[RMDB]
RNA sequence: GGGAACGACUCGAGUAGAGUCGAAAACAUCCAGUGUUCGCACUGGAUGAGAGGAAUGUGGAUCGGCAAACUACAUACCAAAAGCUGAGCUCGAAACAGCAACGAUUUCGUCGUUCGCGACGAAAAACCACCACGUCAAAUUCGUUUGACGUGGUGGAAAAGAAACAACAACAACAAC
Reactivity to DMS in 0.01 (KOAc 150mM, MgCl2 10mM, bicine 150mM(pH8.5), 24C), signal-to-noise 1, nucleotides 027 to 126: c010a010u000c000c000a090g020u010g040u000u000c240g000c010a040c030u040g000g000a000u000g010a020g010a050g020g000a090a020u000g010u000g010g030a080u000c070g060g010c160a120a090a030c000u010a070c140a010u000a120c010c050a030a100a080a190g030c020u000g000a050g030c030u000c060g030a090a150a080c040a000g020c040a050a050c180g000a110u000u010u000c000g010u000c010g000u010u010c200g010c040g000a040c040g030a000a000a010a130a180
Reactivity to 2A3 in 0.01 (KOAc 150mM, MgCl2 10mM, bicine 150mM(pH8.5), 24C), signal-to-noise 2, nucleotides 027 to 126: c020a000u000c000c000a000g010u010g000u050u110c250g030c100a000c000u000g010g000a000u000g000a020g010a010g020g020a110a050u030g020u060g010g010a090u070c110g130g070c080a060a100a020c030u020a010c010a040u070a050c010c000a000a040a000a070g010c010u020g020a020g030c040u020c050g040a110a060a030c000a010g000c010a030a110c050g070a060u030u030u010c010g020u000c020g000u010u010c250g020c040g020a000c000g050a020a020a000a010a020
This 177-nucleotide RNA was probed chemically with DMS and 2A3.
The 2A3 profile rests on 2,730 reads.
Reactivities are given for positions 27 through 126.
The data come from the RNA Mapping Database (RMDB), library M2PK50.
The RNA was probed in 150 mM KOAc, 10 mM MgCl2 and 150 mM bicine (pH 8.5) at 24 C.